An RNA of 177 nucleotides, treated with 2A3 and DMS and read out base by base. The reactions ran in a buffer of 150 mM KOAc, 10 mM MgCl2 and 150 mM bicine (pH 8.5), at 24 C. For 2A3, 2,072 sequencing reads were counted.
RNA sequence: GGGAACGACUCGAGUAGAGUCGAAAAUUUUCACCCUUCCUUUAGUUUCCUUCCUCUCCUGGAGAGGUCUUCUGCCCUAGCCCGGUCUUCGGAGCUUCCUUUGGCUACUACCCGGUGGAAACAACUGCACUUAUGUAUGGUUCGCCAUACAUAAGUGAAAAGAAACAACAACAACAAC
Reactivity to 2A3 in 0.01 (KOAc 150mM, MgCl2 10mM, bicine 150mM(pH8.5), 24C), signal-to-noise 2, nucleotides 027 to 126: u070u020u090u150c030a090c000c010c000u030u050c020c020u060u090u050a050g030u030u050u050c000c000u030u080c010c000u050c000u030c020c100u090g000g040a040g010a020g080g010u000c000u070u040c040u070g070c030c000c010u020a050g020c000c000c040g060g040u070c050u080u050c050g080g010a060g030c000u040u040c000c030u050u080u060g060g000c000u020a060c010u010a020c050c030c020g090g030u100g030g090a030a000a040c030a000a020c040u100g000
Reactivity to DMS in 0.01 (KOAc 150mM, MgCl2 10mM, bicine 150mM(pH8.5), 24C), signal-to-noise 3, nucleotides 027 to 126: u010u000u010u010c090a120c020c000c030u000u000c020c010u000u010u010a090g000u000u000u000c010c030u010u000c010c000u000c020u000c030c100u000g020g010a040g010a060g000g010u000c050u010u000c050u010g020c040c020c050u000a130g010c050c030c050g010g010u000c040u010u010c070g000g000a170g000c060u010u010c040c030u000u000u010g020g020c020u000a090c040u010a100c060c020c030g010g020u000g010g000a050a070a040c090a020a090c180u000g000
DMS adducts were read by reverse transcription with MarathonRT.